[RMDB]
RNA sequence: GGGAACGACUCGAGUAGAGUCGAAAACUAAAGGGACACAUCUAAGGACUAUUAUAGUCUAUGAUGAACGACACCAAGAGUUGGCUGAUAGCGACAUGAAAAGGACACGAACAGACACCGAAAGGAAUCCUUGAUCACUGUUCGCAGUGAUCAAGGAAAAAGAAACAACAACAACAAC
Reactivity to DMS in 0.01 (KOAc 150mM, MgCl2 10mM, bicine 150mM(pH8.5), 24C), signal-to-noise 3, nucleotides 027 to 126: c010u000a030a110a060g000g000g020a160c160a200c000a040u000c000u090a160a250g020g020a040c020u000a060u030u060a110u020a000g010u000c010u010a300u020g000a000u000g000a130a060c120g000a120c160a080c060c040a090a090g000a130g020u010u000g000g020c070u030g020a070u000a080g010c000g000a030c010a010u050g000a090a040a070a130g000g000a030c050a070c080g050a040a090c150a050g000a010c140a070c000c000g000a090a020a090g020g000a080a070
Reactivity to 2A3 in 0.01 (KOAc 150mM, MgCl2 10mM, bicine 150mM(pH8.5), 24C), signal-to-noise 3, nucleotides 027 to 126: c070u090a060a060a020g100g000g030a010c020a000c000a060u000c000u030a010a110g020g000a000c020u020a020u300u150a210u220a110g010u000c000u020a030u070g000a000u000g030a040a000c060g050a040c060a030c010c030a020a000g070a050g130u080u120g000g000c040u030g030a040u010a110g060c010g000a010c010a020u080g050a050a060a000a010g120g000a020c040a000c070g040a100a010c030a020g110a010c030a030c050c020g120a030a000a030g170g000a060a070

This 177-nucleotide RNA was probed chemically with DMS and 2A3.
For DMS the reverse transcriptase was MarathonRT.
For DMS, 2,887 sequencing reads were counted.
The reactions ran in a buffer of 150 mM KOAc, 10 mM MgCl2 and 150 mM bicine (pH 8.5), at 24 C.
Source: RMDB library RFM100, as collected in RNAgym.